[RMDB]
RNA sequence: GGGAACGACUCGAGUAGAGUCGAAAAACACAUGUCUUGACAAAAAAGUCCAGUUUGGCUCAUUUGGCUGGAGUCGUACUGCAUGGCUGCCAUUCUGCUCUGGCAUCCUCAGACAAGCACACUGCCCAUUAGAGGAAAAAGUGUGAUAUAAGUGUUACCGUGAGUAGGAGUUCGCUCCUACUCACGGAAAAGAAACAACAACAACAAC
Reactivity to 2A3 in 0.01 (KOAc 150mM, MgCl2 10mM, bicine 150mM(pH8.5), 24C), signal-to-noise 1, nucleotides 027 to 156: a000c040a020c030a060u110g010u010c000u100u000g030a000c040a000a260a010a160a090a080g010u010c050c010a070g020u060u060u030g030g000c020u050c030a150u110u120u130g110g000c060u080g060g000a000g030u030c010g010u010a030c000u000g130c060a070u090g000g000c010u010g070c010c010a060u120u060c090u160g050c040u000c020u050g010g000c000a040u080c010c000u010c020a020g050a060c020a050a030g100c000a000c010a000c000u150g040c030c000c040a090u140u300a080g070a250g080g000a000a070a000a000a000g000u010g040u000g040a020u040a010u010a300a000g060u030g030u080u030a000
This 207-nucleotide RNA was probed chemically with 2A3. The reactions ran in a buffer of 150 mM KOAc, 10 mM MgCl2 and 150 mM bicine (pH 8.5), at 24 C. It was measured as part of the RMDB library OK3TST. For 2A3, 578 sequencing reads were counted.